[RMDB]
RNA sequence: GGGAACGACUCGAGUAGAGUCGAAAAUCAUAUUUAGAUCUUUGCUUAAACAUCAUCUCUAUAGUAAGCACUUUCCUGACAUCUGGCAAUCCUUUCAAAUUUCUUUCUUUCUUUUCCUGAAUAACAGUGAAUAAUGAUACUAUCUGAUGCUUUAUCACAGGCGGUAAUGAUUCGUCAUUACCGCCUGAAAAGAAACAACAACAACAAC
Reactivity to 2A3 in 0.01 (KOAc 150mM, MgCl2 10mM, bicine 150mM(pH8.5), 24C), signal-to-noise 2, nucleotides 027 to 156: u120c020a020u110a080u200u140u160a090g040a110u010c110u180u090u110g030c050u040u040a070a000a070c020a020u150c010a040u070c040u020c040u120a030u040a120g090u020a000a070g000c000a080c050u050u030u000c010c020u060g110a070c010a080u000c060u030g000g000c020a020a010u060c020c000u010u040u000c100a100a110a240u000u070u000c020u000u020u010c010u050u020u000c050u020u000u020u000c000c010u110g040a060a040u080a040a040c040a040g050u000g160a140a080u100a070a000u100g000a090u030a130c040u040a050u160c040u080g010a060u040g080c010u090u090u170a010u110c090a030